Overview:
Conditions: 150 mM KOAc, 10 mM MgCl2 and 150 mM bicine (pH 8.5), 24 C. An RNA of 177 nucleotides, treated with 2A3 and DMS and read out base by base. The DMS profile rests on 4,950 reads. It was measured as part of the RMDB library OK2TRN. Values cover nucleotides 27 to 126.
[RMDB]
RNA sequence: GGGAACGACUCGAGUAGAGUCGAAAAAGUUACGUCGUCAUGCGGAUAAGAUGAUUACUUUGGCUAAGAAAAAUACAUUGGCUGCAAGACGUUUAGCUGUUGCUAGGCUAAUGAUUCGAUACAAUAAGAAUUAAAGGUUGUUCGCAACCUUUAAUUCAAAAGAAACAACAACAACAAC
Reactivity to 2A3 in 0.01 (KOAc 150mM, MgCl2 10mM, bicine 150mM(pH8.5), 24C), signal-to-noise 3, nucleotides 027 to 126: a010g080u080u070a030c030g020u020c000g010u000c040a040u040g030c030g080g010a080u070a220a060g050a040u110g020a060u070u080a060c050u050u060u080g080g000c050u110a160a100g080a030a140a030a000a010u160a110c030a020u040u000g040g000c020u030g020c010a010a010g050a010c000g020u010u070u090a020g000c040u040g000u160u070g030c030u040a040g070g000c010u010a030a060u050g090a050u050u090c040g030a030u040a190c020a060a090u100a180a050
Reactivity to DMS in 0.01 (KOAc 150mM, MgCl2 10mM, bicine 150mM(pH8.5), 24C), signal-to-noise 5, nucleotides 027 to 126: a060g010u010u010a100c140g010u010c030g010u010c040a080u000g000c010g010g000a110u010a070a120g010a030u000g000a100u000u000a060c030u000u010u000g010g000c130u010a080a060g010a010a120a060a060a050u010a110c050a040u000u010g020g020c010u000g010c040a030a070g010a030c030g000u010u000u000a050g010c060u010g010u000u000g030c080u000a120g010g010c010u000a030a050u010g010a120u000u000c040g010a140u000a060c160a050a100u010a080a120